[RMDB]
RNA sequence: GGGAACGACUCGAGUAGAGUCGAAAAGAUAUGGAUCCGGGGGAGCUGUCUAUCGGAAACGAUAGGCAGCGAAGAACCACGGAUCCUAAGUCAAACAGAUAUACUAGGUUCGCCUAGUAUAUCUGAAUCUAGCCUAUGAGUUCGCUCAUAGGCUAGAAAAAGAAACAACAACAACAAC
Reactivity to DMS in 0.01 (KOAc 150mM, MgCl2 10mM, bicine 150mM(pH8.5), 24C), signal-to-noise 2, nucleotides 027 to 126: g000a020u000a040u010g010g000a000u000c000c000g000g000g000g010g000a040g040c010u000g000u000c000u000a000u010c000g030g000a030a000a040c000g010a020u000a000g010g000c000a000g000c000g010a060a100g010a130a280c020c000a090c010g010g000a010u000c000c000u000a000a030g000u000c010a120a130a250c010a010g000a000u000a000u000a000c000u000a010g000g010u010u030c280g010c010c000u000a010g010u000a010u000a010u000c000u010g000a090a060
Overview
The record gives the reactivity of an RNA of 177 nucleotides to DMS.